[RMDB]
RNA sequence: GGGAACGACUCGAGUAGAGUCGAAAAGUACCGGGUGGAAGUUGGGCUCCAGAACGGUAUGGGCAGCGUGUGCGUGGAUGGCAAAACUUUGGGGAGCUCAGCAACGACAGUUACACGUGGGGCGCAGGCCUGAUUAGCACUUCGGUGCUAAUCAGGCAAAAGAAACAACAACAACAAC
Reactivity to 2A3 in 0.01 (KOAc 150mM, MgCl2 10mM, bicine 150mM(pH8.5), 24C), signal-to-noise 2, nucleotides 027 to 126: g020u010a080c000c000g010g100g030u020g010g080a120a130g000u000u100g000g000g000c000u000c010c030a020g050a090a070c020g030g010u050a060u150g050g000g000c000a020g000c030g090u080g040u100g040c070g030u020g010g070a070u070g060g030c080a080a100a050a090c110u120u130u160g040g050g000g010a010g000c000u010c020a000g000c020a030a030c000g080a010c040a090g050u110u130a060c110a000c030g040u060g010g020g000g000c060g010c040a060g090
Reactivity to DMS in 0.01 (KOAc 150mM, MgCl2 10mM, bicine 150mM(pH8.5), 24C), signal-to-noise 1, nucleotides 027 to 126: g010u020a130c010c000g010g020g010u050g000g030a070a260g000u000u010g120g000g000c000u000c000c020a110g070a190a080c160g010g000u050a060u000g020g020g000c050a030g000c000g000u000g000u000g000c010g050u000g030g030a070u020g000g000c170a050a030a020a010c020u000u050u010g020g000g010g000a080g010c010u000c000a110g000c090a150a120c070g010a080c110a080g000u030u000a020c090a110c000g020u000g000g010g000g010c000g000c090a070g000
Source: RMDB library OK1LIB, as collected in RNAgym. This 177-nucleotide RNA was probed chemically with 2A3 and DMS. For 2A3, 1,176 sequencing reads were counted. For DMS, 2,067 sequencing reads were counted. Reactivities are given for positions 27 through 126. Conditions: 150 mM KOAc, 10 mM MgCl2 and 150 mM bicine (pH 8.5), 24 C.